About this RNA: Structure probing data (2A3) for a 207-nucleotide construct. The reactions ran in a buffer of 150 mM KOAc, 10 mM MgCl2 and 150 mM bicine (pH 8.5), at 24 C. Reactivities are given for positions 27 through 156.

RNA sequence: GGGAACGACUCGAGUAGAGUCGAAAAGCUUCCUCUUGGCGCGGAGGUUUAACUGCGCUCGCUCCCCAUAUCGGUGUGGGCGCACCGGAUUUACAAAUUAAAGUCCCUUAGGGAGCGGAAAGGGACAAAAACUUGCACGUGUUCGCACGUGCAAGAAGUUACGAGCUUUGUUCGCAAAGCUCGUAACAAAAGAAACAACAACAACAAC
Reactivity to 2A3 in 0.01 (KOAc 150mM, MgCl2 10mM, bicine 150mM(pH8.5), 24C), signal-to-noise 1, nucleotides 027 to 156: g050c030u070u030c000c000u000c010u030u030g040g010c010g000c030g020g000a000g060g060u070u170u130a010a040c050u050g020c000g000c000u000c000g000c000u000c000c040c040c040a040u070a120u180c010g030g000u010g000u030g050g160g030c110g000c000a000c000c000g000g000a030u140u150u230a150c120a010a060a000u060u090a110a080a010g010u010c000c000c000u000u010a000g000g000g000a010g020c000g000g000a050a000a000g010g000g040a000c060a000a100a000a000a050c000u010u010g000c000a000c000g000u000g000u040u100c140g020c100a000c000g000u010g000c000a010a000g000a000a000